Annotation: This 177-nucleotide RNA was probed chemically with 2A3 and DMS. As a SHAPE reagent, 2A3 marks flexible, mostly unpaired nucleotides at the ribose 2'-OH. The 2A3 profile rests on 7,650 reads. The data come from the RNA Mapping Database (RMDB), library RFMREP. Reactivities are given for positions 27 through 126. 2A3 adducts were read by reverse transcription with SuperScript II with manganese. Reactivities are rounded to 0.1 and cut off at 0 and 3. The RNA was probed in 150 mM KOAc, 10 mM MgCl2 and 150 mM bicine (pH 8.5) at 24 C.
[RMDB]
RNA sequence: GGGAACGACUCGAGUAGAGUCGAAAACUCAAGGAACGAUAAGUGAGGGUAGUACUGCUAACACCAUUUGUGAUUUAUCACACUCCGCACCGCUGCUUCCUUGUGGAGUUGGUCGGUGCAAUUUCUGCUUAACCAAAUUGUUCGCAAUUUGGUUAAGAAAAGAAACAACAACAACAAC
Reactivity to 2A3 in 0.01 (KOAc 150mM, MgCl2 10mM, bicine 150mM(pH8.5), 24C), signal-to-noise 6, nucleotides 027 to 126: c020u020c030a020a070g100g000a090a030c070g030a070u050a140a070g040u040g110a060g000g070g010u030a030g030u020a090c070u110g060c040u050a070a020c030a050c060c030a070u040u110u110g050u020g020a040u030u050u160a110u060c000a000c010a020c040u050c050c040g000c000a000c000c000g000c010u000g000c010u010u030c010c000u080u120g140u300g040g010a010g010u230u300g090g020u150c030g000g000u000g000c010a000a020u000u010u010c010u040g040
Reactivity to DMS in 0.01 (KOAc 150mM, MgCl2 10mM, bicine 150mM(pH8.5), 24C), signal-to-noise 4, nucleotides 027 to 126: c020u010c040a120a100g000g010a040a060c090g010a100u000a070a070g000u010g000a070g020g010g000u000a050g010u010a060c130u010g010c090u000a070a100c090a100c050c050a110u000u010u010g030u000g000a050u010u010u000a060u020c010a030c040a140c250u000c090c090g000c000a020c000c000g010c020u000g000c010u000u000c010c010u020u010g020u010g020g010a010g000u000u010g040g010u000c040g030g000u000g020c020a020a020u000u000u000c030u000g010